Conditions: 150 mM KOAc, 10 mM MgCl2 and 150 mM bicine (pH 8.5), 24 C.
The record gives the reactivity of an RNA of 170 nucleotides to DMS and 2A3.
Values cover nucleotides 27 to 129.

[RMDB]
RNA sequence: GGGAACGACUCGAGUAGAGUCGAAAAGCCAAGUCCCGAAAUGUCUAGUCCCGUGGUCUCACUUCCAAAAGGAGGAGCGGGGGGACUUGGAACACGAGGGGACCAGUCCAGUCCGUGGGAACUACCCGAACAUGAGGUUUCGACCUCAUGAAAAGAAACAACAACAACAAC
Reactivity to DMS in 0.01 (KOAc 150mM, MgCl2 10mM, bicine 150mM(pH8.5), 24C), signal-to-noise 9, nucleotides 027 to 129: g010c010c010a040a030g000u020c030c020c000g010a060a120a080u060g020u040c090u030a100g020u020c010c010c010g020u030g030g030u050c000u010c020a210c040u030u030c060c120a100a080a110a200g000g000a030g030g020a140g010c020g000g010g010g010g000g010a000c040u000u040g030g000a050a040c070a040c060g020a120g010g030g000g000a050c020c030a050g020u010c020c020a090g000u030c010c040g000u030g000g010g010a080a080c090u030a130c020c010c000g020a090a170
Reactivity to 2A3 in 0.01 (KOAc 150mM, MgCl2 10mM, bicine 150mM(pH8.5), 24C), signal-to-noise 9, nucleotides 027 to 129: g040c000c000a010a000g010u000c010c000c000g040a080a070a050u270g050u090c090u110a040g090u060c010c010c010g090u060g080g110u060c010u010c030a250c060u090u050c070c060a090a160a050a070g020g010a010g010g010a020g000c020g020g010g000g000g000g010a000c000u010u020g010g010a030a010c050a010c040g040a070g010g020g000g010a010c020c030a010g020u010c010c010a010g030u020c020c030g080u100g010g000g010a040a060c020u060a080c020c000c010g010a030a010